[RMDB]
Chemical mapping of a 177-nucleotide RNA with 2A3 and DMS. The reactions ran in a buffer of 150 mM KOAc, 10 mM MgCl2 and 150 mM bicine (pH 8.5), at 24 C. The data come from the RNA Mapping Database (RMDB), library TTRDEL.
RNA sequence: GGGAACGACUCGAGUAGAGUCGAAAAGAUAUGGAUAGUGCAUGGAGCAACAGCUCGGAAACGAGACAUGCUCGCAUGCUGCUAUCCUAAGUCAAAACAAACAGCAUGCUUCGGCAUGCUGUUUGAACGACUUGUUGAAGUUCGCUUCAACAAGUCGAAAAGAAACAACAACAACAAC
Reactivity to 2A3 in 0.01 (KOAc 150mM, MgCl2 10mM, bicine 150mM(pH8.5), 24C), signal-to-noise 1, nucleotides 027 to 126: g020a030u070a030u130g000g010a000u000a020g010u020g030c030a010u000g000g020a010g040c010a000a160c060a130g060c020u020c010g050g020a070a050a020c010g000a000g000a050c040a080u080g000c000u000c090g300c020a000u000g040c000u010g070c000u000a000u000c010c010u000a110a020g040u000c020a010a010a120a200c000a030a000a010c000a000g000c020a000u030g000c020u100u140c300g070g000c010a000u000g000c000u000g000u000u000u000g000a000a000
Reactivity to DMS in 0.01 (KOAc 150mM, MgCl2 10mM, bicine 150mM(pH8.5), 24C), signal-to-noise 2, nucleotides 027 to 126: g000a060u000a300u010g000g000a010u010a020g020u000g000c010a010u000g010g000a000g010c010a020a070c270a260g000c010u000c000g010g000a060a080a250c000g010a020g020a000c090a100u010g000c010u010c030g000c010a020u000g020c000u030g000c030u000a010u000c000c000u000a020a090g030u000c010a130a070a130a300c010a040a040a000c010a010g000c000a000u000g010c000u030u000c290g020g030c000a010u000g010c000u000g000u000u000u000g000a060a200